[RMDB]
RNA sequence: GGGAACGACUCGAGUAGAGUCGAAAAGAGCAACUUAGGAUUUUAGGCUCCCCGGUGCGUCUCGAACCGCGCCGGGCCAAACCCACAGGGGCUGGCGGUCCUGUGCGGUCAAAAUUUUUCCGCUGGAAUACCUAUCCCAGUUUCGACUGGGAUAGAAGUUAUUCAAAGGGUUCGCCCUUUGAAUAACAAAAGAAACAACAACAACAAC
Reactivity to 2A3 in 0.01 (KOAc 150mM, MgCl2 10mM, bicine 150mM(pH8.5), 24C), signal-to-noise 1, nucleotides 027 to 156: g000a000g010c030a010a150c080u150u130a070g160g020a230u190u050u010u140a130g010g070c000u000c000c000c010c010g010g010u010g010c010g020u030c070u100c230g090a140a050c050c020g000c010g000c010c010g000g020g000c010c000a020a010a000c000c000c000a000c000a010g000g020g010g030c000u000g010g000c000g050g000u000c000c000u010g000u010g070c190g000g000u030c020a040a020a020a110u080u230u060u180u130c000c000g000c010u000g000g060a100a060u100a060c000c000u000a000u000c000c000c000a000g000u020u110u110c250g040a050c010u000g000g000g000a000u000a000g000a000a000
Record summary:
Structure probing data (2A3) for a 207-nucleotide construct. The reactions ran in a buffer of 150 mM KOAc, 10 mM MgCl2 and 150 mM bicine (pH 8.5), at 24 C. It was measured as part of the RMDB library M2RFPK. 2A3 adducts were read by reverse transcription with SuperScript II with manganese.